[RMDB]
This 177-nucleotide RNA was probed chemically with 2A3 and DMS. Values are in units of 0.01, from 0 to 300, in steps of 10. DMS adducts were read by reverse transcription with MarathonRT. The reactions ran in a buffer of 150 mM KOAc, 10 mM MgCl2 and 150 mM bicine (pH 8.5), at 24 C.

RNA sequence: GGGAACGACUCGAGUAGAGUCGAAAAUCGCGUGUUCCAUGACGCCUUUGCCGAUAUGGACACGCUCGUCACCUAUGCGCUGAAGGCGAAUUCCAACCAGGCUGUGCUGACGGCGCUGGCAAAGCUACUAGGUGCUUUUAUUCGUAAAAGCACCUAGAAAAGAAACAACAACAACAAC
Reactivity to 2A3 in 0.01 (KOAc 150mM, MgCl2 10mM, bicine 150mM(pH8.5), 24C), signal-to-noise 3, nucleotides 027 to 126: u100c030g000c000g000u010g050u130u060c010c000a010u020g050a010c010g020c040c070u110u140u300g040c060c030g030a040u010a010u200g010g010a000c000a000c010g000c020u020c050g040u000c030a100c050c000u070a100u190g010c030g000c010u030g010a020a010g030g000c010g070a110a090u100u010c020c020a080a100c090c030a100g030g000c030u040g040u130g060c000u010g010a020c010g000g000c020g010c030u020g000g000c040a140a030a030g050c010u100a080
Reactivity to DMS in 0.01 (KOAc 150mM, MgCl2 10mM, bicine 150mM(pH8.5), 24C), signal-to-noise 5, nucleotides 027 to 126: u010c140g020c000g010u000g000u030u000c010c010a030u020g000a210c300g010c030c300u010u010u010g030c050c000g000a180u000a020u000g000g010a020c020a000c000g010c000u000c100g010u000c120a130c060c020u000a070u010g000c020g010c010u000g010a070a290g000g000c010g010a090a130u000u000c020c040a090a090c170c130a080g000g010c140u000g000u000g000c030u010g010a300c020g000g010c010g010c020u010g010g010c070a030a060a070g000c240u000a190